[RMDB]
RNA sequence: GGGAACGACUCGAGUAGAGUCGAAAAAUCUGUGAAUGCCAGUGUUGAUUUGGGGGGGAUUCCAAGUGAGUUUUAGUGAGUGGACAAAUUGGGAAACACAGAAUCUGUGAAUAAUGAAGACCAACUCCGAGUUUCAUAGAUUCGUCUAUGAAACUCGAAAAGAAACAACAACAACAAC
Reactivity to DMS in 0.01 (KOAc 150mM, MgCl2 10mM, bicine 150mM(pH8.5), 24C), signal-to-noise 2, nucleotides 027 to 126: a060u000c030u000g030u020g000a070a180u000g000c030c040a080g010u010g000u000u000g010a090u010u000u000g000g000g000g000g010g030g000a080u000u000c020c040a060a120g000u010g010a080g020u000u000u000u020a080g010u020g030a090g010u010g000g000a080c080a050a080a070u000u000g010g020g010a090a050a160c030a060c020a060g010a090a140u000c100u000g000u000g010a090a090u000a070a070u010g000a070a080g030a120c050c060a040a060c150u020c110